This 207-nucleotide RNA was probed chemically with 2A3.

[RMDB]
RNA sequence: GGGAACGACUCGAGUAGAGUCGAAAACACUCGUUCGCGAGUGAAAAAACCUUUGUGAGUCACAGCCCAUGGGAGAACCUAUGGCCCAUUGGGCCAAUAAUGGUUCGAGGAUCAUGGGUCACAGCUCACUCUGGUAAAAAAGUGUCUUCGGACACAACCGUUAAAUCCAGUUCGCUGGAUUUAACGGAAAAGAAACAACAACAACAAC
Reactivity to 2A3 in 0.01 (KOAc 150mM, MgCl2 10mM, bicine 150mM(pH8.5), 24C), signal-to-noise 1, nucleotides 027 to 156: c000a010c000u010c010g030u090u080c190g050c000g050a000g000u000g000a190a010a000a000a000a010c000c010u000u000u000g020u010g000a010g070u170c000a030c000a080g010c010c000c000a020u010g000g020g000a010g060a020a000c000c000u010a090u080g000g050c000c030c020a120u150u300g000g000g060c000c010a020a060u290a040a070u190g000g000u000u020c010g010a090g010g000a000u010c020a000u020g010g000g010u020c000a000c010a000g000c000u010c000a000c000u000c000u000g000g000u080a120a030a060a060a060a060g020u040g000u010c020u060u100c240g100g000a000c000a000c000a000a020

Conditions: 150 mM KOAc, 10 mM MgCl2 and 150 mM bicine (pH 8.5), 24 C. 2A3 adducts were read by reverse transcription with SuperScript II with manganese. The 2A3 profile rests on 768 reads.